Structure probing data (2A3) for a 207-nucleotide construct.
Reactivities are rounded to 0.1 and cut off at 0 and 3.
It was measured as part of the RMDB library M2RFPK.
The RNA was probed in 150 mM KOAc, 10 mM MgCl2 and 150 mM bicine (pH 8.5) at 24 C.
Reactivities are given for positions 27 through 156.
RNA sequence: GGGAACGACUCGAGUAGAGUCGAAAAAGAUCCACGCUACGGCGUGGAUCACACGUUCAUCCCUAUUGGGACGGAAGUGGGCAUAGUGCCGAAGGAACGCAUUAGUCAUGCGCUACGGCGCAUGACACACAUCAGAGUCACUUCGGUGACUCUGAAAGUUACAGGAUUCGUUCGCGAAUCCUGUAACAAAAGAAACAACAACAACAAC
Reactivity to 2A3 in 0.01 (KOAc 150mM, MgCl2 10mM, bicine 150mM(pH8.5), 24C), signal-to-noise 1, nucleotides 027 to 156: a000g020a000u000c000c000a010c000g010c010u010a030c210g120g000c000g000u000g000g000a000u000c000a000c000a000c000g000u000u010c000a050u040c050c000c000u150a300u110u300g010g010g000a020c020g030g030a010a130g020u060g010g000g010c020a040u100a110g060u040g040c000c000g020a100a000g050g010a050a050c040g000c060a110u070u150a030g040u040c000a000u000g000c000g000c000u010a020c300g090g030c000g000c000a000u000g000a000c000a000c000a000c000a050u030c000a010g030a000g000u000c000a000c000u020u070c040g040g010u000g000a000c000u000c000u000g000a000a000a000